[RMDB]
This 207-nucleotide RNA was probed chemically with DMS and 2A3. The reactions ran in a buffer of 150 mM KOAc, 10 mM MgCl2 and 150 mM bicine (pH 8.5), at 24 C. The data come from the RNA Mapping Database (RMDB), library M2RFPK. DMS adducts were read by reverse transcription with MarathonRT. Reactivities are given for positions 27 through 156.
RNA sequence: GGGAACGACUCGAGUAGAGUCGAAAAGCGCAAAUCCACAAACGCCAACGAUGAGCGUUUCGCUGUAGCCGUUUAAGGCAACAGCCGGGGCCGCCUGAGCCCUGUUACCAAAGACGGCUGGCGGGGGUAAUUACUUAUUGCUUCGGCAAUAAGUAAAUGAUCUCUAGAAGUUCGCUUCUAGAGAUCAAAAAGAAACAACAACAACAAC
Reactivity to DMS in 0.01 (KOAc 150mM, MgCl2 10mM, bicine 150mM(pH8.5), 24C), signal-to-noise 2, nucleotides 027 to 156: g020c000g060c020a050a060a050u000c000c040a090c060a050a300a060c030g010c020c000a100a150c160g000a100u000g000a270g020c020g010u010u000u000c040g030c020u000g020u000a030g030c010c030g010u000u000u000a160a300g000g030c010a010a050c020a040g060c060c050g000g020g020g000c060c030g010c100c060u020g000a170g000c000c000c010u000g010u000u010a070c050c000a020a200a180g010a160c220g000g020c030u000g010g000c050g000g000g000g040g030u000a060a070u000u000a010c000u000u000a030u000u000g000c000u000u010c300g010g010c000a010a000u000a000a010g000u000a000a010a140
Reactivity to 2A3 in 0.01 (KOAc 150mM, MgCl2 10mM, bicine 150mM(pH8.5), 24C), signal-to-noise 3, nucleotides 027 to 156: g040c030g030c080a040a040a080u050c030c030a050c060a100a100a020c040g000c010c020a100a070c120g130a130u120g040a050g040c010g020u000u070u110c030g000c010u040g030u130a050g010c010c000g010u000u160u230a100a050g000g010c010a020a010c000a020g030c020c000g010g000g010g010c000c070g030c070c070u050g010a020g010c000c010c000u010g030u050u060a040c010c010a010a030a030g020a010c000g000g020c010u030g020g000c020g010g000g000g000g010u040a090a080u040u000a010c000u000u010a000u000u000g000c000u030u020c110g120g000c000a000a000u010a010a010g000u000a000a000a000